[RMDB]
RNA sequence: GGGAACGACUCGAGUAGAGUCGAAAAAAGUCGCUAAACGAGCGAAACCCUUGUCGUUAGUUGCCAGCACGUAAUGGUGGGGACUCUAGCGAGACUGCCGGUGUUAAACCGGAGGAAGGUGGGGACGCCGAGUACCUCCCUUCGGGGAGGUACUCGGAAAAGAAACAACAACAACAAC
Reactivity to 2A3 in 0.01 (KOAc 150mM, MgCl2 10mM, bicine 150mM(pH8.5), 24C), signal-to-noise 1, nucleotides 027 to 126: a000a000g130u030c020g000c030u050a000a000a210c080g090a080g000c000g020a080a050a050c000c000c000u050u050g090u020c030g000u000u000a000g030u100u060g000c000c000a000g000c000a040c000g000u000a000a000u000g000g010u000g020g000g000g050a100c000u000c000u000a000g000c010g040a040g010a000c050u000g020c040c000g000g000u000g040u220u220a210a160a010c000c000g000g030a040g000g030a050a000g050g060u070g000g000g020g050a010c030g030